An RNA of 177 nucleotides, treated with 2A3 and DMS and read out base by base.
2A3 adducts were read by reverse transcription with SuperScript II with manganese.
For DMS the reverse transcriptase was MarathonRT.
RNA sequence: GGGAACGACUCGAGUAGAGUCGAAAAGAUAUGGAACAUCUCGAGACUAUGAAGUCCCUCGGAAACGAGGGAUGGAGUCUAACGAGAGUGUUCCUAAGUCAAACCCGGUGAGUUCGCUCACCGGGAACACGGUAGAAUGGUUCGCCAUUCUACCGUGAAAAGAAACAACAACAACAAC
Reactivity to 2A3 in 0.01 (KOAc 150mM, MgCl2 10mM, bicine 150mM(pH8.5), 24C), signal-to-noise 2, nucleotides 027 to 126: g010a000u040a060u130g010g000a000a000c000a030u000c020u030c010g090a100g010a020c020u050a300u300g010a020a000g000u000c010c000c010u000c020g010g000a050a050a040c020g000a000g030g000g000a010u000g010g000a010g010u000c020u040a180a030c020g000a000g010a020g080u000g010u010u010c000c000u000a110a000g040u050c050a050a080a280c000c000c000g000g010u010g010a010g000u040u300c300g000c140u010c000a000c010c000g000g010g000a000a010
Reactivity to DMS in 0.01 (KOAc 150mM, MgCl2 10mM, bicine 150mM(pH8.5), 24C), signal-to-noise 3, nucleotides 027 to 126: g010a050u000a300u010g000g010a000a000c000a060u010c000u010c000g010a080g010a020c000u010a180u000g010a190a300g000u000c010c010c000u000c000g000g000a120a110a110c010g010a010g010g020g000a000u000g000g000a040g000u000c010u020a080a100c010g010a010g000a050g010u000g000u000u000c000c000u000a010a050g010u000c020a120a170a210c000c000c000g020g030u000g010a030g010u010u010c300g020c000u000c010a000c000c000g000g000g000a010a040
Reactivities are given for positions 27 through 126.